Chemical mapping of a 177-nucleotide RNA with DMS. The reactions ran in a buffer of 150 mM KOAc, 10 mM MgCl2 and 150 mM bicine (pH 8.5), at 24 C. DMS adducts were read by reverse transcription with MarathonRT. The data come from the RNA Mapping Database (RMDB), library TTRDES.
RNA sequence: GGGAACGACUCGAGUAGAGUCGAAAAGAUAUGGAUAUACCAGCUUUUGACGCUCUCCGUGUCGGAAACGACACGAGAGCGAUAAGCUGAGUAUAUCCUAAGUCAAACACCAGGUUCGCCUGGUGAACUUUUGAUCAGACUUCGGUCUGAUCAAAAGAAAAGAAACAACAACAACAAC
Reactivity to DMS in 0.01 (KOAc 150mM, MgCl2 10mM, bicine 150mM(pH8.5), 24C), signal-to-noise 1, nucleotides 027 to 126: g000a070u000a300u010g000g000a010u000a010u000a000c010c000a000g010c000u000u000u000u000g000a230c080g040c000u000c000u000c100c220g000u000g000u000c010g000g010a120a110a300c000g010a000c000a050c000g000a000g040a030g030c020g010a010u010a000a040g020c000u000g000a090g000u020a010u010a010u000c000c000u000a020a050g010u010c020a210a180a210c000a030c000c000a000g010g000u000u020c240g030c000c000u000g000g000u000g000a050a070